An RNA of 207 nucleotides, treated with 2A3 and DMS and read out base by base. It was measured as part of the RMDB library OK3TST. For 2A3, 788 sequencing reads were counted. For DMS the reverse transcriptase was MarathonRT.
[RMDB]
RNA sequence: GGGAACGACUCGAGUAGAGUCGAAAAGAGUCGUAUAUUGUAACUGAGCUGAAGUUCACUCAUCGAUAAGUUGUGCCCAAGGAAUCGAAUUCCUUCCAGUCCUUCUAAGCAGUCCAGGGAAACCAAUUUAAAAGCGAACACAACAAAACUAACAGACAUGUAUCCAACCUUUCGAGGUUGGAUACAUAAAAGAAACAACAACAACAAC
Reactivity to 2A3 in 0.01 (KOAc 150mM, MgCl2 10mM, bicine 150mM(pH8.5), 24C), signal-to-noise 1, nucleotides 027 to 156: g010a020g000u020c000g020u050a020u010a020u130u230g060u050a120a060c010u060g040a000g040c030u040g100a070a050g050u020u070c080a000c000u030c040a110u060c050g090a060u040a040a110g010u020u000g010u060g030c000c000c000a000a010g000g000a010a000u160c120g020a040a040u070u020c000c000u000u000c050c020a010g010u000c010c030u020u000c000u090a050a000g010c000a000g020u040c010c010a000g000g020g000a050a000a030c010c010a010a020u030u120u170a120a230a000a000g020c030g020a090a000c080a010c020a040a080c000a000a000a050a080c120u170a060a010c010a060g060a050c050
Reactivity to DMS in 0.01 (KOAc 150mM, MgCl2 10mM, bicine 150mM(pH8.5), 24C), signal-to-noise 1, nucleotides 027 to 156: g010a160g080u000c000g030u000a100u000a040u010u000g000u000a060a200c030u010g010a070g000c030u000g040a010a140g050u000u000c010a110c010u000c020a090u000c070g050a070u000a070a070g000u010u040g020u000g000c000c060c030a070a140g030g030a080a060u010c150g000a080a300u000u010c040c020u020u000c000c000a150g010u020c000c000u000u000c030u010a070a110g000c070a140g000u000c020c030a120g040g020g010a150a090a090c040c020a030a080u000u000u010a040a040a080a040g010c040g000a050a010c060a060c030a020a050c020a050a000a030a080c090u000a120a030c050a090g020a190c160